[RMDB]
RNA sequence: GGGAACGACUCGAGUAGAGUCGAAAAAAAACGCUGGGUCCGAACUACCAGUCGGGGUACAGCAUCGAUCGUACUGAAGCGCGCACGGUACGGGAGCUGUACGCCGUGACUGGCGGACCUGUGCUGAAGCGCGCACGGCAACCGAAAGGUGCGAAAAGAUUCUUUAUACCUUCGGGUAUAAAGAAUCAAAAGAAACAACAACAACAAC
Reactivity to 2A3 in 0.01 (KOAc 150mM, MgCl2 10mM, bicine 150mM(pH8.5), 24C), signal-to-noise 1, nucleotides 027 to 156: a000a000a020a020c030g000c030u030g050g000g030u000c010c000g030a090a020c090u080a060c280c000a000g020u010c010g030g000g000g010u000a000c000a000g010c010a010u300c020g000a020u000c000g000u010a000c010u000g060a180a020g020c000g020c000g020c010a030c010g010g010u010a010c000g000g000g010a010g010c040u020g000u040a010c050g120c060c000g010u030g040a010c000u010g010g000c020g000g000a000c000c000u000g000u000g000c000u010g010a120a040g010c000g000c010g020c000a000c000g010g000c010a000a010c000c000g040a100a030a000g000g000u020g000c020g060a070a110a000a000
Conditions: 150 mM KOAc, 10 mM MgCl2 and 150 mM bicine (pH 8.5), 24 C. The record gives the reactivity of an RNA of 207 nucleotides to 2A3. For 2A3 the reverse transcriptase was SuperScript II with manganese. Values cover nucleotides 27 to 156. The 2A3 profile rests on 1,341 reads.